[RMDB]
Source: RMDB library OK2TST, as collected in RNAgym. The record gives the reactivity of an RNA of 177 nucleotides to 2A3 and DMS. Conditions: 150 mM KOAc, 10 mM MgCl2 and 150 mM bicine (pH 8.5), 24 C.
RNA sequence: GGGAACGACUCGAGUAGAGUCGAAAAAGCUGCCACGACUGAUGAGAGAACCCGUAGGCGCAUAAGAUCAUUACAUGACAACCUAUACGCUGGAGGGCCCAUGGUAAUGCAAGGUGCUGAAGUGGGAGGUCACUAUUACUUUCGAGUAAUAGUGACCAAAAGAAACAACAACAACAAC
Reactivity to 2A3 in 0.01 (KOAc 150mM, MgCl2 10mM, bicine 150mM(pH8.5), 24C), signal-to-noise 2, nucleotides 027 to 126: a000g020c030u050g040c000c010a030c020g070a040c040u060g040a030u100g030a110g020a000g020a150a070c000c020c000g020u060a050g030g000c010g010c010a010u030a130a050g070a090u060c000a010u020u190a060c040a090u060g030a040c010a020a030c020c000u090a120u040a160c030g010c060u090g000g210a050g020g030g000c000c010c010a010u030g010g030u060a030a010u030g030c050a050a070g050g030u050g010c020u030g010a070a020g030u060g070g000g030a090
Reactivity to DMS in 0.01 (KOAc 150mM, MgCl2 10mM, bicine 150mM(pH8.5), 24C), signal-to-noise 4, nucleotides 027 to 126: a090g010c030u010g000c020c010a090c050g010a110c050u010g020a060u020g000a120g020a130g030a130a130c040c020c020g000u010a220g010g020c030g020c030a030u000a050a050g000a120u010c020a020u000u020a080c150a230u000g010a050c060a060a050c020c030u010a050u010a060c060g010c040u020g000g000a190g010g000g000c080c030c030a020u010g020g000u000a030a060u000g000c100a080a090g010g010u000g000c030u000g010a050a050g010u010g010g000g020a170
Reactivities are given for positions 27 through 126. For DMS, 3,538 sequencing reads were counted.